[RMDB]
RNA sequence: GGGAACGACUCGAGUAGAGUCGAAAAGAUAUGGAGGUAUCUAUAAUUACAACAGCGCUUAUCGGAAACGAUAAGCGACAUGUAGAUAUAGAGUACCUCCUAAGUCAAAGGGUAGUUCGCUACCCAACUGUAAAUCACUGUUCGCAGUGAUUUACAGAAAAGAAACAACAACAACAAC
Reactivity to 2A3 in 0.01 (KOAc 150mM, MgCl2 10mM, bicine 150mM(pH8.5), 24C), signal-to-noise 3, nucleotides 027 to 126: g010a020u080a060u160g000g000a000g000g000u010a020u010c000u000a030u010a090a190u150u130a060c060a300a060c050a220g110c020g000c000u000u000a000u000c000g030g000a060a060a080c000g000a020u000a000a000g000c020g000a010c000a000u070g010u000a030g030a170u020a000u010a050g050a050g080u040a020c000c000u000c000c000u010a020a010g020u000c030a070a070a150g020g000g000u000a010g000u050u140c300g020c140u000a000c000c000c000a000a010
Reactivity to DMS in 0.01 (KOAc 150mM, MgCl2 10mM, bicine 150mM(pH8.5), 24C), signal-to-noise 3, nucleotides 027 to 126: g000a070u020a300u000g000g000a040g010g010u000a040u000c000u000a010u000a020a080u000u000a000c020a050a090c280a130g020c000g000c000u000u000a000u000c000g010g010a120a110a190c010g000a010u000a000a000g000c000g000a050c070a090u010g000u010a010g000a130u000a010u000a000g000a050g000u000a010c000c010u000c000c000u000a000a060g010u000c040a140a140a150g000g010g000u000a000g000u000u000c290g020c000u010a010c000c010c010a030a070